[RMDB]
RNA sequence: GGGAACGACUCGAGUAGAGUCGAAAAAUGCAUCUUGCAAAGGCAGAGUAUGACCGCGAAGUGUCUGUUCAACGCAAAAUUGAACGCAUGGCGGAAAAUGCUGCAGCGCAGAUGUACAAGGAGGCACGCGCUGAAAAUCGCAAGUCUAAGAUCAUCACUAAAUCAAACACUUCGGUGUUUGAUUUAGAAAAGAAACAACAACAACAAC
Reactivity to DMS in 0.01 (KOAc 150mM, MgCl2 10mM, bicine 150mM(pH8.5), 24C), signal-to-noise 2, nucleotides 027 to 156: a140u000g000c000a010u000c020u010u040g060c010a090a210a170g050g000c010a050g020a140g020u010a070u000g000a300c050c000g010c000g010a100a240g020u000g000u000c050u010g090u030u000c000a020a010c030g010c140a100a070a130a100u000u000g000a010a020c000g040c020a050u030g010g000c020g020g000a040a070a090a100u020g010c000u000g020c050a100g020c290g070c030a050g000a050u000g010u010a100c030a080a130g060g020a160g030g020c020a080c150g050c020g010c050u010g010a050a050a090a070u010c030g010c030a110a100g010u010c070u000a110a080g000a100u020c070a060u010c070a120
Reactivity to 2A3 in 0.01 (KOAc 150mM, MgCl2 10mM, bicine 150mM(pH8.5), 24C), signal-to-noise 4, nucleotides 027 to 156: a000u100g000c010a020u020c030u150u110g000c040a030a100a110g140g000c010a020g030a040g080u150a060u090g090a070c010c000g010c030g160a300a070g070u030g020u090c210u180g010u010u000c000a020a020c030g040c200a040a050a090a220u010u000g000a000a000c000g000c010a000u060g120g000c000g010g000a050a020a030a010u040g000c010u010g010c010a020g020c010g000c040a010g020a060u010g010u030a050c040a040a060g130g020a060g060g000c000a000c060g020c030g000c030u080g080a050a020a020a060u120c030g000c040a050a120g020u000c030u080a060a080g010a070u120c030a030u040c020a070
Chemical mapping of a 207-nucleotide RNA with DMS and 2A3. The reactions ran in a buffer of 150 mM KOAc, 10 mM MgCl2 and 150 mM bicine (pH 8.5), at 24 C. For DMS the reverse transcriptase was MarathonRT. Source: RMDB library OK3TST, as collected in RNAgym. The 2A3 profile rests on 2,662 reads.